[RMDB]
RNA sequence: GGGAACGACUCGAGUAGAGUCGAAAACACUACCAAGGUGUACAAUACCGUUCAGGACCCCGAAGGGCAUCAUUGUAGACAAACAACCCAGCUUGUCGAGGAGUUCUGCCACCUGGGUUGUGCGCUGGCAUAAUCAUGGUUUCGACCAUGAUUAUGCAAAAGAAACAACAACAACAAC
Reactivity to 2A3 in 0.01 (KOAc 150mM, MgCl2 10mM, bicine 150mM(pH8.5), 24C), signal-to-noise 9, nucleotides 027 to 126: c040a020c050u160a110c050c050a090a070g060g000u010g020u020a020c010a020a040u050a150c010c020g010u040u060c020a010g010g050a060c000c010c000c010g040a060a070g030g020g000c020a070u070c020a020u060u110g070u080a070g080a220c080a030a150a010c010a010a040c020c020c020a020g020c050u060u070g060u090c030g010a190g020g030a190g030u080u040c040u060g060c030c020a040c010c040u160g010g000g000u000u010g010u000g010c020g010c030u040g060
Reactivity to DMS in 0.01 (KOAc 150mM, MgCl2 10mM, bicine 150mM(pH8.5), 24C), signal-to-noise 4, nucleotides 027 to 126: c100a130c110u000a120c100c100a080a050g000g000u000g010u020a030c040a050a070u000a060c040c040g020u020u020c060a070g000g000a070c030c010c010c030g010a090a100g000g000g000c010a090u010c110a130u000u000g010u020a060g010a090c150a080a090a040c020a050a040c030c040c040a060g000c110u000u030g010u010c120g000a100g010g000a170g000u010u000c010u010g020c100c020a050c190c050u020g010g000g040u000u000g000u000g000c050g050c020u020g000

This 177-nucleotide RNA was probed chemically with 2A3 and DMS. The data come from the RNA Mapping Database (RMDB), library OK1LIB. The 2A3 profile rests on 9,997 reads.